[RMDB]
RNA sequence: GGGAACGACUCGAGUAGAGUCGAAAAUGCCGGGACAAUGCUUCUCGCGCACCAGCUGGACCACGGCUGCCAGUACCCGGUCGUGGAUCGAGUCGUGCAGGAACAGCCGGCUCGUCGAGCCGCACGACCGUAGGUGGUUGUUCGCAACCACCUACGGAAAAGAAACAACAACAACAAC
Reactivity to 2A3 in 0.01 (KOAc 150mM, MgCl2 10mM, bicine 150mM(pH8.5), 24C), signal-to-noise 1, nucleotides 027 to 126: u050g000c000c010g030g000g020a050c090a220a300u230g020c080u030u050c010u010c020g000c010g020c020a010c020c010a010g030c010u050g000g000a070c030c000a050c060g010g000c010u010g020c080c000a090g040u120a090c020c030c000g000g020u020c000g030u030g000g080a190u070c020g000a010g020u000c020g040u090g010c020a020g010g090a130a020c010a050g020c020c020g000g000c000u010c020g040u040c050g090a040g000c000c040g040c010a050c060g050a020
Reactivity to DMS in 0.01 (KOAc 150mM, MgCl2 10mM, bicine 150mM(pH8.5), 24C), signal-to-noise 2, nucleotides 027 to 126: u010g000c010c020g020g000g020a100c120a210a130u010g010c140u020u000c030u000c020g010c140g040c080a100c100c050a120g010c010u000g000g020a130c040c040a030c040g010g000c000u000g010c050c090a080g000u000a080c090c080c030g010g000u000c020g040u000g020g010a100u000c000g000a040g010u000c090g010u020g000c020a110g020g010a040a090c130a130g000c010c010g010g020c010u010c000g000u000c060g000a110g020c140c100g020c060a100c050g000a060